The record gives the reactivity of an RNA of 177 nucleotides to DMS and 2A3.
Source: RMDB libraries RFM100 and RFMREP, as collected in RNAgym.
Reactivities are rounded to 0.1 and cut off at 0 and 3.
The reactions ran in a buffer of 150 mM KOAc, 10 mM MgCl2 and 150 mM bicine (pH 8.5), at 24 C.
DMS adducts were read by reverse transcription with MarathonRT.
[RMDB]
RNA sequence: GGGAACGACUCGAGUAGAGUCGAAAAUGCUCUCUGGAGCUUCUGUGUUACCACGUUGGAGAGAGUGUUGAUUUGGACUCCCUGAUAGGGCUUAGGCAUCUUUCAGCCCUUGCUUCGGGUUUUCGUCCGACAGGGAUCUUUUCGAAGAUCCCUGUCGAAAAGAAACAACAACAACAAC
Reactivity to DMS in 0.01 (KOAc 150mM, MgCl2 10mM, bicine 150mM(pH8.5), 24C), signal-to-noise 4, nucleotides 027 to 126: u000g000c000u000c000u000c010u000g010g000a110g030c030u000u000c050u000g020u000g010u000u020a150c160c020a060c090g010u010u020g010g010a050g000a020g000a020g020u010g000u010u010g020a100u010u000u030g020g040a070c040u010c030c080c070u020g010a110u010a030g020g010g010c010u000u010a070g010g010c210a100u020c040u010u010u010c140a080g000c010c000c000u000u000g000c090u010u020c070g000g000g000u000u000u000u010c090g000u010c090
Reactivity to 2A3 in 0.01 (KOAc 150mM, MgCl2 10mM, bicine 150mM(pH8.5), 24C), signal-to-noise 2, nucleotides 027 to 126: u030g000c000u010c010u000c010u060g130g130a130g090c000u140u000c100u080g080u010g070u040u140a170c240c000a100c100g030u050u000g090g030a000g000a000g000a000g030u020g040u010u010g060a280u030u000u140g050g000a020c000u010c000c010c020u000g060a120u100a100g010g000g000c050u010u050a000g000g040c130a250u180c190u020u090u020c020a020g020c000c000c000u000u070g010c010u030u130c030g000g010g000u000u000u030u030c050g040u000c000